Structure probing data (DMS and 2A3) for a 177-nucleotide construct.
RNA sequence: GGGAACGACUCGAGUAGAGUCGAAAAGCGCGAUCUGAUCGGCCGCGCGUACCGAUCUGGCGCGGCCUGCGCUCUAGGCCGUACGCUAGUCGAUCGGCCACGUACGAUCUAGCGCCUCUGGCCGCGCACGCAGCUGGGGAUUCGUCCCCAGCUGCGUAAAAGAAACAACAACAACAAC
Reactivity to DMS in 0.01 (KOAc 150mM, MgCl2 10mM, bicine 150mM(pH8.5), 24C), signal-to-noise 2, nucleotides 027 to 126: g020c010g060c020g000a000u020c020u010g040a080u000c160g000g050c150c030g030c040g030c020g010u000a140c030c010g000a050u010c050u000g000g000c010g050c010g000g020c000c000u000g050c300g000c060u000c050u000a000g010g030c070c000g030u000a020c010g000c180u100a030g020u000c000g000a080u010c160g030g020c010c220a060c010g030u000a000c000g000a000u000c010u000a020g000c100g000c000c100u000c230u000g000g020c010c000g020c020g040c030
Reactivity to 2A3 in 0.01 (KOAc 150mM, MgCl2 10mM, bicine 150mM(pH8.5), 24C), signal-to-noise 1, nucleotides 027 to 126: g030c010g000c020g000a080u030c030u130g060a160u130c040g000g000c010c000g080c010g000c050g030u030a030c000c000g030a140u050c020u090g090g000c000g010c000g080g060c090c000u010g000c000g010c000u020c020u000a000g010g000c010c000g010u030a000c010g020c210u010a030g020u020c020g210a300u190c250g020g010c030c000a020c010g000u000a010c000g000a020u010c010u000a010g000c010g000c020c000u070c060u010g010g010c040c010g020c000g010c020
Description
DMS adducts were read by reverse transcription with MarathonRT. It was measured as part of the RMDB library OK2TRN.